The record gives the reactivity of an RNA of 177 nucleotides to DMS and 2A3.
[RMDB]
RNA sequence: GGGAACGACUCGAGUAGAGUCGAAAAAAGUUGAUAUGGAUUUACUCCGAGGAGACGAACUACCACGAACAGGGGUAACUCUACCCGUGGCGUCUCCGUUUGACGAGUAAGUCCAAAGUCAACAAAACAGUAUCUCUAAGUUCGCUUAGAGAUACUGAAAAGAAACAACAACAACAAC
Reactivity to DMS in 0.01 (KOAc 150mM, MgCl2 10mM, bicine 150mM(pH8.5), 24C), signal-to-noise 3, nucleotides 027 to 126: a100a070g000u000u000g000a020u010a170u000g000g010a020u010u000u000a010c000u010c010c020g000a060g010g010a030g000a010c020g000a120a040c090u020a300c020c010a010c000g000a050a270c190a020g000g000g000g000u000a070a090c020u010c000u000a120c200c120c000g030u000g010g000c000g020u000c000u000c000c000g010u000u010u000g000a200c300g000a010g020u000a000a020g000u020c000c000a010a040a070g000u000c010a000a000c000a070a100a070a100
Reactivity to 2A3 in 0.01 (KOAc 150mM, MgCl2 10mM, bicine 150mM(pH8.5), 24C), signal-to-noise 1, nucleotides 027 to 126: a000a000g000u010u000g000a010u010a000u060g000g010a000u000u000u000a000c010u000c000c000g010a010g000g000a010g000a000c000g010a050a020c090u170a050c100c000a000c000g050a070a010c040a090g020g000g010g000u000a040a020c000u010c010u020a030c020c020c020g020u000g010g010c010g000u010c010u010c000c000g000u060u030u040g010a010c010g000a000g010u000a000a000g000u000c000c000a000a010a000g000u000c000a000a010c010a000a050a000a010

As a SHAPE reagent, 2A3 marks flexible, mostly unpaired nucleotides at the ribose 2'-OH. The 2A3 profile rests on 2,715 reads. Reactivities are rounded to 0.1 and cut off at 0 and 3.